[RMDB]
RNA sequence: GGGAACGACUCGAGUAGAGUCGAAAAGAUAUGGAUCCUGAAGACGCUUUCUUAUAUCGGAAACGAUAUAGAAAGAACUACGUUUAAGGGAUCCUAAGUCAAAGAUGUGGGCUUCGGCCCACAUCAACUAAGUACAAGGCUUCGGCCUUGUACUUAGAAAAGAAACAACAACAACAAC
Reactivity to DMS in 0.01 (KOAc 150mM, MgCl2 10mM, bicine 150mM(pH8.5), 24C), signal-to-noise 2, nucleotides 027 to 126: g010a030u010a300u000g010g020a010u000c000c010u010g010a300a070g000a000c000g000c020u010u000u000c010u010u000a000u010a000u000c010g000g000a130a080a190c020g000a000u000a000u000a010g000a050a010a000g000a130a070c120u010a300c010g020u000u000u000a080a300g000g000g000a000u010c000c000u020a020a050g000u010c030a120a070a060g000a030u010g000u000g000g000g000c020u000u020c240g030g010c000c000c000a020c010a000u000c000a050a150
Reactivity to 2A3 in 0.01 (KOAc 150mM, MgCl2 10mM, bicine 150mM(pH8.5), 24C), signal-to-noise 1, nucleotides 027 to 126: g000a000u090a020u120g000g020a020u010c010c050u060g040a070a010g020a020c030g050c050u060u030u060c030u170u300a020u000a000u020c010g000g000a070a070a000c030g000a010u000a000u000a000g020a000a010a020g030a060a000c090u220a040c070g010u050u020u070a070a030g000g000g000a010u000c000c030u000a050a010g070u020c060a000a100a170g020a000u000g000u000g000g020g030c040u070u160c300g090g000c000c000c000a010c000a000u000c000a010a010